[RMDB]
RNA sequence: GGGAACGACUCGAGUAGAGUCGAAAAUGAAAAUCGCGCGAACUGGUGCCGCGCGCGCGCGUGGCGUCGGUGGUCGGCGAGCCCACGGACGCAAAAACUCGCGCGUAAAUAAAUAGCAUUAGAAAAAGGUCUCAUAUUAGUUCGCUAAUAUGAGACCAAAAGAAACAACAACAACAAC
Reactivity to 2A3 in 0.01 (KOAc 150mM, MgCl2 10mM, bicine 150mM(pH8.5), 24C), signal-to-noise 1, nucleotides 027 to 126: u150g030a030a000a010a180u130c050g000c010g000c000g010a200a290c030u020g000g000u000g000c000c010g000c020g000c010g000c030g000c000g010c000g000u020g060g010c000g000u010c040g160g000u000g000g000u010c020g060g100c110g010a010g000c020c010c010a010c010g080g000a000c000g000c000a000a100a050a070a300c050u010c020g000c000g010c020g000u040a010a050a020u300a010a010a000u000a000g030c000a000u000u030a000g000a040a020a010a000a000
Reactivity to DMS in 0.01 (KOAc 150mM, MgCl2 10mM, bicine 150mM(pH8.5), 24C), signal-to-noise 1, nucleotides 027 to 126: u000g000a070a060a160a030u010c040g010c000g000c000g000a160a100c020u000g000g010u010g000c000c040g000c000g000c020g010c100g050c040g000c010g040u010g000g010c000g000u010c000g030g070u000g000g000u000c080g000g020c150g000a100g000c170c000c000a000c010g000g000a050c000g040c010a030a020a030a050a250c100u000c000g000c010g000c000g010u000a040a020a030u000a000a010a020u010a040g000c000a040u000u000a050g000a140a070a130a120a040
Annotation: Structure probing data (2A3 and DMS) for a 177-nucleotide construct. DMS adducts were read by reverse transcription with MarathonRT. 2A3 adducts were read by reverse transcription with SuperScript II with manganese. It was measured as part of the RMDB library M2PK90. The DMS profile rests on 852 reads.